[RMDB]
RNA sequence: GGGAACGACUCGAGUAGAGUCGAAAACGAGGGCGGUUCGGCGGUGACGACGGGCGAGCGGGUCUCGGCCAAGGAUGUGCUGGCGGCGGUGCCGGGCCUGCCGGUGGUGGACAGGAUCGCGCGCAAGCGUAGCCUAGAAGUUCGCUUCUAGGCUACGAAAAGAAACAACAACAACAAC
Reactivity to DMS in 0.01 (KOAc 150mM, MgCl2 10mM, bicine 150mM(pH8.5), 24C), signal-to-noise 7, nucleotides 027 to 126: c090g000a110g020g010g010c050g020g010u000u000c070g010g010c050g010g010u000g010a090c090g020a130c100g010g000g010c060g010a120g010c080g000g000g000u000c020u010c050g010g000c020c060a090a110g010g010a090u010g020u000g010c020u000g010g000c030g010g000c040g010g010u000g000c020c020g010g000g000c040c010u000g020c030c040g010g020u010g010g010u000g000g000a090c080a090g000g000a070u010c030g010c050g010c060g010c120a090a100g010
Reactivity to 2A3 in 0.01 (KOAc 150mM, MgCl2 10mM, bicine 150mM(pH8.5), 24C), signal-to-noise 4, nucleotides 027 to 126: c040g020a090g010g050g010c050g040g000u100u120c040g040g010c030g010g080u060g050a060c050g020a030c020g020g040g050c030g010a040g010c050g070g050g050u040c110u070c060g030g000c020c020a070a060g140g010a110u130g040u090g100c040u050g040g030c030g020g010c030g050g040u070g010c030c000g000g010g000c010c010u030g020c010c000g020g020u060g010g040u060g010g010a020c020a030g030g030a060u050c020g000c010g000c000g000c050a030a030g070
This 177-nucleotide RNA was probed chemically with DMS and 2A3. DMS adducts were read by reverse transcription with MarathonRT.